[RMDB]
RNA sequence: GGGAACGACUCGAGUAGAGUCGAAAAGCUAACCCAGCUUCGGCUGGGUUAGCAGUGAACCUUUGUGCCUUCGCUUUGAUCGUACAGAGCCCAUUGGGCUCGGUACGGGAGCGAAUGCACUCUGGUAAUUAGCUUGAUAUCUUCGGAUAUCAAGCAACUGUAUAGGGUACUUCGGUACCCUAUACAGAAAAGAAACAACAACAACAAC
Reactivity to 2A3 in 0.01 (KOAc 150mM, MgCl2 10mM, bicine 150mM(pH8.5), 24C), signal-to-noise 2, nucleotides 027 to 156: g000c000u000a000a000c000c000c000a000g020c010u040u080c250g190g000c000u000g000g040g000u010u000a000g000c000a000g000u070g140a040a010c000c000u010u000u010g030u010g000c000c030u000u020c000g020c040u110u070u110g100a100u240c020g000u000a000c010a070g020a010g000c000c000c040a300u220u300g000g020g020c000u000c000g010g010u000a010c000g000g000g000a000g020c000g000a000a000u000g000c000a000c000u000c000u000g000g030u050a110a190u190u120a050g020c000u000u000g000a010u000a000u000c010u020u070c280g100g000a000u000a000u000c000a000a000g000c000a000a010
Reactivity to DMS in 0.01 (KOAc 150mM, MgCl2 10mM, bicine 150mM(pH8.5), 24C), signal-to-noise 2, nucleotides 027 to 156: g000c000u000a000a030c020c010c000a010g010c010u000u000c300g100g010c010u000g020g020g040u010u000a000g000c010a020g010u000g010a110a080c000c000u010u000u000g000u000g020c020c050u000u000c000g020c010u000u010u000g010a060u000c010g000u000a030c000a030g010a010g010c000c000c010a300u000u000g080g040g020c000u000c010g020g020u000a000c020g000g010g000a010g010c000g020a010a010u000g010c010a000c000u000c030u000g000g030u000a040a110u010u010a160g020c000u000u000g000a040u000a000u000c000u000u010c300g040g000a020u000a010u000c000a000a000g030c000a010a010
This 207-nucleotide RNA was probed chemically with 2A3 and DMS. As a SHAPE reagent, 2A3 marks flexible, mostly unpaired nucleotides at the ribose 2'-OH. The RNA was probed in 150 mM KOAc, 10 mM MgCl2 and 150 mM bicine (pH 8.5) at 24 C. The 2A3 profile rests on 1,578 reads. 2A3 adducts were read by reverse transcription with SuperScript II with manganese. For DMS, 5,491 sequencing reads were counted.